[RMDB]
RNA sequence: GGGAACGACUCGAGUAGAGUCGAAAACGGUUAUCCGCCGGCUGUGCAGGGCAGCGGCCCUUGCCCGGAUUUUGGGCAGCGUGCACCAGCAGGCGACAAAUCGGCAUCAAUCGCUGGCGGAAAAGCCAGGAAACCUGUUAUUCGUAACAGGUUUCCUAAAAGAAACAACAACAACAAC
Reactivity to DMS in 0.01 (KOAc 150mM, MgCl2 10mM, bicine 150mM(pH8.5), 24C), signal-to-noise 5, nucleotides 027 to 126: c110g000g010u000u010a230u000c020c020g030c000c000g000g020c000u020g010u010g010c040a060g010g000g010c010a190g020c180g030g000c010c010c000u020u020g020c020c000c030g010g000a100u020u000u030u030g000g000g010c010a120g010c080g010u010g000c010a120c220c170a130g020c030a050g020g010c010g010a050c050a020a030a030u010c050g010g020c090a090u020c140a080a090u040c160g000c000u010g000g000c000g000g010a000a040a050a100g000c010c010
Reactivity to 2A3 in 0.01 (KOAc 150mM, MgCl2 10mM, bicine 150mM(pH8.5), 24C), signal-to-noise 6, nucleotides 027 to 126: c020g000g020u170u030a030u040c010c010g000c000c000g010g000c020u060g030u080g050c030a020g010g020g000c030a090g190c110g260g030c070c000c010u020u070g000c010c010c010g080g060a180u110u080u100u210g020g040g020c030a050g010c080g090u070g000c010a070c100c000a060g010c010a020g170g000c000g010a010c010a000a080a040u110c040g060g000c030a050u050c060a120a090u080c050g000c000u000g000g010c000g000g000a020a020a020a010g000c010c010